[RMDB]
RNA sequence: GGGAACGACUCGAGUAGAGUCGAAAAUACAUUUUUAAGACCCUUAGUUAUUUAGCUUUACCGCCCAGGAUGGGGUGCAGCGUUCCUGCAAUAUCCAGGGCACCUAGGUGCAGCCUUGUAGUUAUAGUAUAUCUACAUAUCUUCGGAUAUGUAGAAACAGUACCAUGUAGUUCGCUACAUGGUACUGAAAAGAAACAACAACAACAAC
Reactivity to 2A3 in 0.01 (KOAc 150mM, MgCl2 10mM, bicine 150mM(pH8.5), 24C), signal-to-noise 2, nucleotides 027 to 156: u090a000c020a090u230u230u050u050u170a080a060g040a140c000c000c030u020u060a020g000u010u130a110u140u100u290a050g010c020u020u190u080a040c060c020g010c000c000c000a040g000g000a010u010g080g000g060g020u010g000c010a000g020c000g070u050u060c020c000u000g040c010a070a040u020a020u130c010c000a000g000g010g010c020a030c000c010u040a030g000g000u090g070c020a010g020c000c010u060u190g030u060a030g000u130u100a120u020a200g090u030a040u020a020u210c000u010a000c000a000u030a000u000c000u000u040c120g010g000a000u000a000u040g030u000a000g000a000a000a000
Reactivity to DMS in 0.01 (KOAc 150mM, MgCl2 10mM, bicine 150mM(pH8.5), 24C), signal-to-noise 1, nucleotides 027 to 156: u000a080c050a080u000u000u000u000u010a020a140g000a090c000c020c020u000u000a130g010u000u000a070u000u010u010a050g020c070u010u000u000a030c010c080g000c120c010c040a110g030g020a080u010g000g040g070g050u000g030c010a010g020c100g020u010u010c110c030u000g010c090a090a150u000a030u000c000c040a120g030g030g070c000a060c230c020u010a000g050g030u000g020c040a140g020c010c040u000u000g010u010a060g020u000u000a110u000a140g050u000a120u010a090u000c000u000a000c000a020u000a000u000c010u000u000c240g030g010a000u000a010u010g030u010a000g010a000a020a080